An RNA of 177 nucleotides, treated with 2A3 and read out base by base.
[RMDB]
RNA sequence: GGGAACGACUCGAGUAGAGUCGAAAAAUAUUUACGCUGGUCUUUUUUACCCUACGACGUAUUCGCCAGCAGGUCGUUCGCCCGCUGAAUCAACUGGUCACCGCCAGUCAGCGAAUUGAACAUGGUCCCUCGUGACUGGUUUCGACCAGUCACGAGGAAAAGAAACAACAACAACAAC
Reactivity to 2A3 in 0.01 (KOAc 150mM, MgCl2 10mM, bicine 150mM(pH8.5), 24C), signal-to-noise 1, nucleotides 027 to 126: a050u150a030u020u010u020a020c060g000c020u000g000g200u170c300u030u120u100u000u000u230a140c040c040c000u060a080c070g110a030c070g090u080a110u020u190c030g030c030c000a010g000c000a000g000g000u000c000g000u000u000c030g230c100c000c000g000c000u000g020a000a000u120c020a050a100c000u000g020g030u010c030a030c080c050g010c020c000a000g050u050c000a000g020c010g020a080a000u060u180g060a030a050c150a150u070g060g000u200c000

Reactivities are given for positions 27 through 126.
2A3 adducts were read by reverse transcription with SuperScript II with manganese.
The reactions ran in a buffer of 150 mM KOAc, 10 mM MgCl2 and 150 mM bicine (pH 8.5), at 24 C.